An RNA of 177 nucleotides, treated with 2A3 and DMS and read out base by base.
For 2A3, 17,630 sequencing reads were counted.

RNA sequence: GGGAACGACUCGAGUAGAGUCGAAAAUGGACAAAUAGUUCGUCGCCGGAAAUGAACCUGUGGCUGUAAUGGCUGAUGUGGCGCCCCUUGGUAAAGGGCUUAAAGGGUAUUAGCCUGCCAUGUCCAAGUCCAUUUUACAAUUCGUUGUAAAAUGGACAAAAGAAACAACAACAACAAC
Reactivity to 2A3 in 0.01 (KOAc 150mM, MgCl2 10mM, bicine 150mM(pH8.5), 24C), signal-to-noise 9, nucleotides 027 to 126: u090g020g010a030c040a030a180a100u160a100g040u030u040c030g010u030c020g020c030c010g030g040a080a130a100u160g020a070a100c010c000u080g030u060g060g010c010u030g050u200a100a120u140g050g000c020u020g010a040u030g000u020g010g000c000g000c000c000c000c000u000u010g010g000u020a010a010a030g000g000g000c000u030u040a080a060a020g040g010g000u060a070u200u300a080g010c000c000u000g000c000c000a010u040g010u010c020c010a070a010
Reactivity to DMS in 0.01 (KOAc 150mM, MgCl2 10mM, bicine 150mM(pH8.5), 24C), signal-to-noise 6, nucleotides 027 to 126: u020g020g000a030c050a090a090a070u040a070g010u010u000c030g020u010c030g000c020c030g000g010a070a070a090u030g020a050a080c030c030u010g010u010g010g000c020u000g010u020a080a070u030g000g040c050u000g000a030u010g040u010g000g010c020g000c010c000c000c000u000u000g010g010u010a200a150a160g000g000g000c010u000u010a020a030a070g010g000g000u000a030u030u000a200g010c000c000u000g000c000c000a000u000g000u000c000c160a090a150
Overview: Reactivities are rounded to 0.1 and cut off at 0 and 3. DMS adducts were read by reverse transcription with MarathonRT. 2A3 adducts were read by reverse transcription with SuperScript II with manganese. The data come from the RNA Mapping Database (RMDB), library OK1LIB. Conditions: 150 mM KOAc, 10 mM MgCl2 and 150 mM bicine (pH 8.5), 24 C.